This 207-nucleotide RNA was probed chemically with 2A3 and DMS. The RNA was probed in 150 mM KOAc, 10 mM MgCl2 and 150 mM bicine (pH 8.5) at 24 C. High 2A3 reactivity points to a flexible backbone, as in loops and unpaired stretches. For 2A3, 1,789 sequencing reads were counted. The DMS profile rests on 2,055 reads.
RNA sequence: GGGAACGACUCGAGUAGAGUCGAAAACGCCAUUUAUGGCAUGAUUAGAUUGCAAAGCAAUGAACUCAAGAAGGAAUUGAAAUAAGGAGGGACAUGAUGGGGAAGGAGUACAAAACAAUCUCUCAACAUGAUUGAACCAUUUGGGAUGGAGAAGCACGUUUGCUAGACAAUUCGUUGUCUAGCAAACAAAAGAAACAACAACAACAAC
Reactivity to 2A3 in 0.01 (KOAc 150mM, MgCl2 10mM, bicine 150mM(pH8.5), 24C), signal-to-noise 4, nucleotides 027 to 156: c140g010c000c000a040u070u180u090a230u230g010g000c030a030u060g030a070u060u150a080g060a120u050u100g010c050a090a110a090g040c030a010a030u130g040a050a030c050u070c050a060a020g030a040a040g060g020a020a100u100u190g070a150a070a020u190a060a050g030g020a040g010g020g000a000c020a050u120g010a050u020g080g020g000g000a010a000g040g000a010g030u020a070c050a050a050a010a020c020a040a020u000c000u020c030u030c040a020a050c020a100u110g000a070u060u030g050a070a060c010c010a000u040u050u120g030g000g000a000u040g000g030a030g030a040a010g040c040a010c120
Reactivity to DMS in 0.01 (KOAc 150mM, MgCl2 10mM, bicine 150mM(pH8.5), 24C), signal-to-noise 2, nucleotides 027 to 156: c000g070c000c020a100u000u000u030a090u050g020g000c000a110u020g000a080u000u050a110g050a120u000u000g020c060a050a110a100g050c020a060a100u030g030a060a010c060u000c050a030a070g000a120a100g020g020a100a060u000u000g000a080a120a070u000a060a170g030g040a110g000g000g000a080c010a090u030g000a230u030g000g080g070g000a040a050g000g000a040g010u000a250c050a060a140a040a030c040a080a070u000c010u000c140u020c150a060a060c080a050u000g020a030u010u020g000a090a110c060c020a300u000u000u000g020g070g000a170u010g010g020a020g030a030a130g030c030a130c130